[RMDB]
RNA sequence: GGGAACGACUCGAGUAGAGUCGAAAAUGUGACUUCAGAUGUGAAGUCAUAGAGGACAAGGACACAGCCACCUUCUUGGAUUUCUCACUCUGUGGAAGGGCAGUGACAUUCCAUGAGACAAGCAGUCCUGUGGUGAGGCCCAUGUCAAGAAGGCCUACGUAGUCCAGGGUUUCGACCCUGGACUACGAAAAGAAACAACAACAACAAC
Reactivity to 2A3 in 0.01 (KOAc 150mM, MgCl2 10mM, bicine 150mM(pH8.5), 24C), signal-to-noise 1, nucleotides 027 to 156: u100g040u000g010a000c000u000u000c000a080g140a300u280g140u100g220a000a000g000u000c000a000u060a010g090a020g000g010a000c050a090a040g000g000a000c030a000c000a060g080c050c000a010c000c000u090u110c030u000u140g000g010a010u050u050u070c010u020c010a050c020u000c110u110g010u020g020g080a070a010g100g050g000c020a040g050u050g110a020c040a220u030u010c030c020a000u060g070a010g040a120c010a130a020g000c030a000g030u060c000c000u070g060u040g020g000u060g000a060g010g000c000c010c110a080u200g030u100c000a010a010g040a020a020g060g000c000c010u060a060
Chemical mapping of a 207-nucleotide RNA with 2A3. Conditions: 150 mM KOAc, 10 mM MgCl2 and 150 mM bicine (pH 8.5), 24 C. Source: RMDB library OK3TST, as collected in RNAgym.